[RMDB]
RNA sequence: GGGAACGACUCGAGUAGAGUCGAAAACUCCCUCAGGGUCACAGAGCCUGAGGUGACCAUUGUACGGGGGCUGGUUGAUGCGGAGGUGACGGCCGAUGAGGAUGUUGAGUUCAGCUGUGAGGUGUCCCCCUGGUACCAGAUUCGUCUGGUACCAGGGAAAAGAAACAACAACAACAAC
Reactivity to DMS in 0.01 (KOAc 150mM, MgCl2 10mM, bicine 150mM(pH8.5), 24C), signal-to-noise 1, nucleotides 027 to 126: c140u000c030c010c020u020c050a030g000g010g040u000c040a140c250a100g020a160g000c010c010u010g020a030g020g010u000g000a040c110c010a130u010u000g020u010a070c080g010g020g000g020g020c060u020g000g020u000u010g020a040u000g020c090g010g020a110g010g020u010g000a090c050g000g020c010c040g000a090u000g000a050g000g010a050u000g020u000u000g020a090g010u000u000c050a060g030c000u000g020u010g010a080g010g000u000g000u000c060c010